RNA sequence: GGGAACGACUCGAGUAGAGUCGAAAAGAUAUGGAUAUAGCAGAGAUGCCAUAGGCCGAGUCGGAAACGAUAUCCUAUGACAUCGACGAAGCUAUAUCCUAAGUCAAAACCGGCCUUCGGGCCGGAAGGAAUACAUGACGUUCGCGUCAUGUAUUCCAAAAGAAACAACAACAACAAC
Reactivity to 2A3 in 0.01 (KOAc 150mM, MgCl2 10mM, bicine 150mM(pH8.5), 24C), signal-to-noise 1, nucleotides 027 to 126: g030a010u050a040u150g010g000a000u010a000u000a010g010c010a010g000a000g020a030u010g030c020c010a010u000a010g060g000c090c160g090a040g070u010c020g040g000a080a050a000c010g000a010u020a050u030c020c000u000a010u010g000a030c010a020u020c030g090a110c010g010a060a020g000c000u000a010u000a000u000c000c000u010a090a010g010u000c020a000a010a070a210c000c000g000g000c010c000u140u150c250g120g010g040c000c030g000g000a010a010
Reactivity to DMS in 0.01 (KOAc 150mM, MgCl2 10mM, bicine 150mM(pH8.5), 24C), signal-to-noise 2, nucleotides 027 to 126: g020a030u020a300u000g000g000a000u000a010u000a000g010c000a040g030a130g010a020u000g030c000c010a040u000a010g000g030c300c090g000a140g000u010c000g010g010a070a080a120c000g000a000u000a080u010c000c000u010a000u030g010a000c000a000u000c000g000a140c130g000a120a090g000c000u000a010u000a000u000c000c000u000a010a060g010u020c060a060a060a100a120c000c000g000g010c000c020u000u010c150g010g010g000c000c000g030g000a010a020